[RMDB]
RNA sequence: GGGAACGACUCGAGUAGAGUCGAAAAGUGUUCCAGGGCAUUCCUGACGGCAUCAGCGACGCCGACGGCCAACUCGCGCAGAUCAGCCUGAUGGCCCCUCACCGGCCCCGGCUGGGCGGGCUGGGGGGUUCCCGCGUAAUUUCGAUUACGCGGGAACAAAAGAAACAACAACAACAAC
Reactivity to DMS in 0.01 (KOAc 150mM, MgCl2 10mM, bicine 150mM(pH8.5), 24C), signal-to-noise 1, nucleotides 027 to 126: g030u010g030u010u000c030c050a160g030g000g000c090a090u000u000c010c020u020g010a260c170g000g030c010a040u010c040a140g000c020g010a150c100g020c020c020g000a140c090g000g020c100c040a070a140c170u000c070g030c060g060c120a150g000a090u010c130a060g000c010c040u000g030a110u010g000g020c020c010c000c010u000c030a050c020c020g000g030c000c010c000c160g000g000c120u020g010g030g000c060g020g010g000c180u010g030g000g000g010g000

Chemical mapping of a 177-nucleotide RNA with DMS. Source: RMDB library OK2TST, as collected in RNAgym. The reactions ran in a buffer of 150 mM KOAc, 10 mM MgCl2 and 150 mM bicine (pH 8.5), at 24 C. The DMS profile rests on 900 reads.